[RMDB]
RNA sequence: GGGAACGACUCGAGUAGAGUCGAAAAGUAGUUUUGACCCCACCAUCAAUCCCGGAUGGAAGAAACAUGUGAUGAGGCUCGCCCACUCACCUAUGGUAACAUAGGGGCUUGCCUGCGUGGCACAUGGAACGACCAGUCUUGUGGGAAAACCGCUACCUCAUAUUAUCGAAUUCGUUCGAUAAUAUGAAAAAGAAACAACAACAACAAC
Reactivity to 2A3 in 0.01 (KOAc 150mM, MgCl2 10mM, bicine 150mM(pH8.5), 24C), signal-to-noise 5, nucleotides 027 to 156: g030u060a010g010u010u030u090u210g100a130c010c040c010c010a030c010c030a090u110c050a040a150u060c030c010c000g020g000a010u000g020g000a000a020g010a020a300a000c010a010u010g000u020g010a070u040g020a020g000g000c000u010c020g000c000c010c000a110c050u160c040a100c000c020u000a010u010g030g030u110a120a030c000a010u000a010g000g000g000g010c000u010u030g000c000c010u070g030c030g050u130g160g000c010a000c000a020u010g000g020a060a030c010g030a030c020c010a070g140u030c000u080u120g020u120g010g000g000a030a040a010a030c050c050g030c040u060a040c000c020
Reactivity to DMS in 0.01 (KOAc 150mM, MgCl2 10mM, bicine 150mM(pH8.5), 24C), signal-to-noise 3, nucleotides 027 to 156: g010u000a120g020u000u000u000u020g010a220c000c030c010c020a180c010c000a050u010c020a060a150u000c030c020c030g000g030a070u030g000g030a070a150g010a150a100a110c050a080u010g030u000g010a100u000g000a080g030g020c000u000c090g020c030c030c020a150c110u000c060a100c170c020u000a010u000g010g000u010a120a230c030a070u000a030g010g000g020g030c090u010u000g130c030c020u000g060c100g020u000g000g000c020a030c030a040u000g010g030a050a160c030g000a220c020c000a090g010u000c060u010u000g030u000g000g010g010a120a060a080a070c030c060g000c020u000a080c110c050